[RMDB]
Source information
This 177-nucleotide RNA was probed chemically with DMS and 2A3. The DMS profile rests on 2,217 reads. It was measured as part of the RMDB library OK2TST. 2A3 adducts were read by reverse transcription with SuperScript II with manganese.
RNA sequence: GGGAACGACUCGAGUAGAGUCGAAAAGGACGCUACGUUGGCCAAUGUCACCGACGAACUUAUCGACCGCUGUUGGGCGCCGAAGGUACACGGCGCGUGGAACAUUCAUCGGGCCACCGCCGCGCAGGUAGUCCCAAUUGUUCGCAAUUGGGACUACAAAAGAAACAACAACAACAAC
Reactivity to DMS in 0.01 (KOAc 150mM, MgCl2 10mM, bicine 150mM(pH8.5), 24C), signal-to-noise 3, nucleotides 027 to 126: g020g020a090c030g020c050u000a020c060g020u000u000g020g020c020c190a080a130u000g020u010c050a080c030c020g000a120c040g010a080a100c040u010u020a110u000c050g020a090c080c030g000c060u000g010u000u000g020g010g030c030g000c050c010g000a060a050g010g030u020a120c090a090c010g010g010c000g020c250g000u000g020g000a030a050c040a080u000u000c170a140u000c190g020g000g020c000c000a020c020c040g010c010c010g020c040g000c060a080g000
Reactivity to 2A3 in 0.01 (KOAc 150mM, MgCl2 10mM, bicine 150mM(pH8.5), 24C), signal-to-noise 2, nucleotides 027 to 126: g050g040a020c020g070c050u090a030c060g110u040u040g040g020c030c080a090a110u220g030u040c010a020c060c020g020a050c010g030a050a090c030u120u050a060u240c030g020a020c050c000g000c040u020g070u290u180g010g030g000c030g000c000c000g030a040a060g100g020u140a050c020a000c040g000g000c020g000c030g000u010g000g020a080a000c010a030u070u150c050a070u160c120g020g010g000c000c000a010c000c000g000c000c010g000c030g020c020a020g040